[RMDB]
RNA sequence: GGGAACGACUCGAGUAGAGUCGAAAAGAUAUGGAAUGUUGUAGCUACCCACCCUAUGGAGUCGAUGAAAGAGCUCGGAAACGAGCUCUGGAGACUUCAUCAUAGGAGGCUACAACAUUCCUAAGUCCAAGAGUAGCUAGUUCGCUAGCUACUCUUGAAAAGAAACAACAACAACAAC
Reactivity to 2A3 in 0.01 (KOAc 150mM, MgCl2 10mM, bicine 150mM(pH8.5), 24C), signal-to-noise 1, nucleotides 027 to 126: g040a040u190a090u300g010g030a040a000u010g010u000u000g000u000a000g000c000u050a170c090c020c050a090c010c000c020u030a010u020g000g000a010g020u020c030g280a300u000g000a030a010a020g000a010g000c000u000c020g010g020a090a070a090c010g000a020g000c010u010c010u000g010g000a000g000a000c010u070u040c060a030u120c000a020u060a020g000g030a010g020g000c000u000a010c000a000a000c010a000u010u000c000c000u000a030a040g020u000c040
Reactivity to DMS in 0.01 (KOAc 150mM, MgCl2 10mM, bicine 150mM(pH8.5), 24C), signal-to-noise 4, nucleotides 027 to 126: g010a110u020a300u020g000g000a030a000u000g000u010u000g030u000a020g010c010u000a130c100c080c160a300c070c020c040u000a020u000g000g010a010g030u010c010g020a140u000g000a300a120a040g000a010g000c000u000c000g010g000a080a130a170c010g010a000g020c000u000c000u000g010g000a160g010a030c010u000u000c240a050u000c180a080u020a020g000g010a200g000g000c000u000a010c000a010a020c000a010u000u000c020c000u000a030a100g030u000c070
The record gives the reactivity of an RNA of 177 nucleotides to 2A3 and DMS. The RNA was probed in 150 mM KOAc, 10 mM MgCl2 and 150 mM bicine (pH 8.5) at 24 C. The 2A3 profile rests on 3,719 reads. Reactivities are rounded to 0.1 and cut off at 0 and 3. It was measured as part of the RMDB library TTRINS. 2A3 adducts were read by reverse transcription with SuperScript II with manganese.